[RMDB]
RNA sequence: GGGAACGACUCGAGUAGAGUCGAAAAUGCGAUAAAAGAUAUGGAUUCGGUCGCGAUGAGCAUACGUAACAUCUAUCGGAAACGAUAGUGGUAUGCGAGCGGACCGAAUCCUAAGUCAAGGUAAGAACCAGAAUGAAGUGUUCGCACUUCAUUCUGGAAAAGAAACAACAACAACAAC
Reactivity to 2A3 in 0.01 (KOAc 150mM, MgCl2 10mM, bicine 150mM(pH8.5), 24C), signal-to-noise 1, nucleotides 027 to 126: u140g000c090g070a040u180a300a250a040a090g030a020u120a000u250g000g000a000u000u000c020g000g060u000c060g000c060g300a300u250g060a010g000c000a010u000a000c020g140u090a030a170c020a180u140c000u010a000u000c000g050g000a040a000a060c010g020a000u010a010g000u000g030g040u020a000u000g000c080g000a070g000c010g050g030a010c000c030g000a000a000u040c000c000u000a000a000g000u000c020a100a050g140g000u130a160a080g080a100a210
Reactivity to DMS in 0.01 (KOAc 150mM, MgCl2 10mM, bicine 150mM(pH8.5), 24C), signal-to-noise 2, nucleotides 027 to 126: u030g010c100g050a190u010a090a060a090a190g010a020u000a300u000g000g000a000u000u000c010g000g000u000c010g020c000g020a090u010g000a300g030c000a000u000a000c000g030u000a030a090c300a040u000c000u000a000u000c000g000g000a150a130a160c020g010a010u000a000g040u000g020g010u000a000u000g000c000g000a150g010c020g000g000a010c000c000g000a010a000u000c000c000u030a000a040g010u000c020a080a080g020g000u000a070a150g020a120a200